[RMDB]
RNA sequence: GGGAACGACUCGAGUAGAGUCGAAAAAAUACCACGUAUCCUUAUUCAGAAAACAGCAUAUAUGAAGCACCUGUGGCGUGCAAGUUGCUUCGUUCAUGGUACUGCGUUUGCCAGGAAGCAGUUCGCUGUCAGCAGCUGGGCUGAGCUUCCAGCCCCAUGACUAUUUAAAUUUCGAUUUAAAUAGUCAAAAAGAAACAACAACAACAAC
Reactivity to DMS in 0.01 (KOAc 150mM, MgCl2 10mM, bicine 150mM(pH8.5), 24C), signal-to-noise 2, nucleotides 027 to 156: a070a090u010a070c000c020a070c070g010u000a070u000c030c010u010u000a150u000u020c100a190g000a120a100a100a090c060a040g030c040a080u000a090u010a080u010g020a080a040g010c020a050c060c020u000g030u000g030g030c070g080u010g000c030a040a080g000u010u000g010c000u010u000c030g010u010u000c100a090u000g010g020u000a020c020u000g010c050g000u000u000u000g010c010c070a090g010g000a040a050g020c000a050g010u000u000c040g030c010u010g010u000c130a200g020c040a110g000c010u000g020g030g020c010u000g000a140g000c030u000u000c030c020a090g000c010c000c000c030a270
Reactivity to 2A3 in 0.01 (KOAc 150mM, MgCl2 10mM, bicine 150mM(pH8.5), 24C), signal-to-noise 4, nucleotides 027 to 156: a000a000u190a050c040c020a060c050g050u050a080u110c000c010u160u100a180u190u240c100a100g120a070a130a040a030c020a010g010c050a020u080a010u040a030u300g060a060a030g000c010a050c030c050u100g050u090g170g030c090g010u070g010c030a030a030g040u070u030g000c000u020u030c030g090u090u080c070a080u080g020g000u050a050c030u080g100c030g090u050u120u050g030c030c020a040g020g010a010a000g010c000a000g010u030u050c030g000c020u010g070u070c030a090g050c010a030g020c070u120g000g000g010c000u020g000a010g070c010u020u000c010c000a010g000c000c000c000c000a040